[RMDB]
RNA sequence: GGGAACGACUCGAGUAGAGUCGAAAAGCGGGGCUUGAAACGCGGGUAGCGCGCACGCCCGGCGACGAAGUUCGCAUACGCGGUGUGCUGGUGCCGAAGUGUCUGCUGCAACGGCACGCUCGACACCUAGAACAUACCGUAUUCGUACGGUAUGUAACAGAGAUACUAAGUUCGCUUAGUAUCUCUGAAAAGAAACAACAACAACAAC
Reactivity to DMS in 0.01 (KOAc 150mM, MgCl2 10mM, bicine 150mM(pH8.5), 24C), signal-to-noise 6, nucleotides 027 to 156: g020c030g010g010g040g020c030u010u000g010a090a090a040c040g010c030g030g020g040u010a080g020c040g020c060g030c020a060c070g010c000c010c010g000g020c000g000a040c040g010a110a230g010u000u000c000g010c020a120u010a240c070g000c070g070g030u000g020u000g030c030u000g010g020u000g000c010c010g000a060a140g010u000g000u000c040u010g030c050u000g010c100a140a190c100g010g000c000a020c010g010c060u000c000g010a050c010a030c010c010u000a120g020a130a050c010a010u000a010c000c000g020u010a040u000u000c250g030u000a020c010g010g000u000a000u000g000u000a040a160
Reactivity to 2A3 in 0.01 (KOAc 150mM, MgCl2 10mM, bicine 150mM(pH8.5), 24C), signal-to-noise 9, nucleotides 027 to 156: g040c040g000g010g020g010c040u070u090g100a080a100a020c070g010c030g030g030g050u110a050g050c040g000c010g000c050a000c010g000c000c000c000g010g010c000g000a000c010g140a150a060g050u110u020c010g000c040a030u050a220c050g030c120g030g010u010g000u010g010c040u070g010g030u010g000c010c010g020a070a030g020u040g020u080c070u090g080c050u080g010c060a070a040c020g020g000c010a000c030g020c040u020c010g020a020c010a020c020c010u030a050g040a110a000c000a000u000a000c000c000g000u000a010u010u080c190g050u020a000c000g000g000u000a000u000g000u000a020a000

Chemical mapping of a 207-nucleotide RNA with DMS and 2A3.
Source: RMDB library M2RFOK, as collected in RNAgym.
For 2A3, 20,757 sequencing reads were counted.